[RMDB]
RNA sequence: GGGAACGACUCGAGUAGAGUCGAAAAAGACUGUGGCCGAGUAUACGUUUGAUGAUAUAUACAACGUUGUAAUGAGCAGUGGGGAUAUUGGGAGGCCUGACUACUGGCAGGCGUUGGACAAUAGGUAGCUAUUAACUAAUUUCGAUUAGUUAAUAGCAAAAGAAACAACAACAACAAC
Reactivity to DMS in 0.01 (KOAc 150mM, MgCl2 10mM, bicine 150mM(pH8.5), 24C), signal-to-noise 9, nucleotides 027 to 126: a070g010a070c040u010g010u010g010g010c030c030g010a130g020u020a040u010a120c040g010u000u010u020g020a090u020g010a110u020a110u030a080u020a100c080a040a070c080g010u000u000g000u010a070a090u020g000a120g010c040a040g010u010g010g000g000g000a070u010a040u010u010g000g000g000a120g010g010c010c020u000g000a070c050u020a070c140u010g010g010c020a030g000g000c040g010u010u010g000g010a080c100a050a050u020a050g010g010u010a130
Reactivity to 2A3 in 0.01 (KOAc 150mM, MgCl2 10mM, bicine 150mM(pH8.5), 24C), signal-to-noise 9, nucleotides 027 to 126: a000g050a010c040u050g020u100g130g100c020c010g000a020g050u060a070u030a130c060g030u020u100u100g130a120u050g050a010u020a020u030a000u010a230c060a040a010c040g010u020u030g070u110a170a150u110g030a030g020c040a010g010u050g010g020g000g000a020u030a090u150u090g020g030g010a040g050g010c010c000u030g030a060c020u100a050c040u050g070g000c000a010g010g020c020g010u020u040g030g030a030c040a090a070u040a070g070g040u020a020
Structure probing data (DMS and 2A3) for a 177-nucleotide construct. The DMS profile rests on 67,805 reads. Values cover nucleotides 27 to 126. It was measured as part of the RMDB library OK1LIB. The reactions ran in a buffer of 150 mM KOAc, 10 mM MgCl2 and 150 mM bicine (pH 8.5), at 24 C.